[RMDB]
RNA sequence: GGGAACGACUCGAGUAGAGUCGAAAAAUCAUGACGAAGAAAGGACGAGAGCAAGCUGAGAGGCAAGCUGAGAGGCAAGCUCAAAGAAAGGAGCGUCCAACUCCUUACCCUCGUCUUUAAAAAAGAACAACACAAUCUACUUCGGUAGAUUGUGUUGAAAAGAAACAACAACAACAAC
Reactivity to 2A3 in 0.01 (KOAc 150mM, MgCl2 10mM, bicine 150mM(pH8.5), 24C), signal-to-noise 1, nucleotides 027 to 126: a000u250c150a150u190g110a040c080g080a060a120g130a120a120a030g050g000a010c010g010a030g000a000g030c080a140a020g020c010u040g040a010g020a030g160g150c010a030a040g010c000u020g020a050g000a000g030g040c030a020a040g030c000u000c030a050a060a040g030a020a050a010g070g020a010g000c040g010u080c000c020a040a130c000u020c020c000u000u070a080c020c000c000u010c000g000u000c000u000u040u030a060a090a010a000a000a000g060a060a010
Reactivity to DMS in 0.01 (KOAc 150mM, MgCl2 10mM, bicine 150mM(pH8.5), 24C), signal-to-noise 2, nucleotides 027 to 126: a100u000c080a110u020g020a090c210g020a090a070g030a070a040a010g000g000a000c040g030a050g020a010g000c060a070a120g010c040u000g000a300g000a190g020g000c030a050a300g000c000u000g020a160g010a240g000g000c050a030a240g020c010u020c000a030a130a060g000a070a080a010g000g000a020g010c000g000u020c170c130a090a120c050u000c000c000u020u000a110c040c000c030u000c000g000u000c010u010u000u010a000a040a040a080a000a060g010a050a150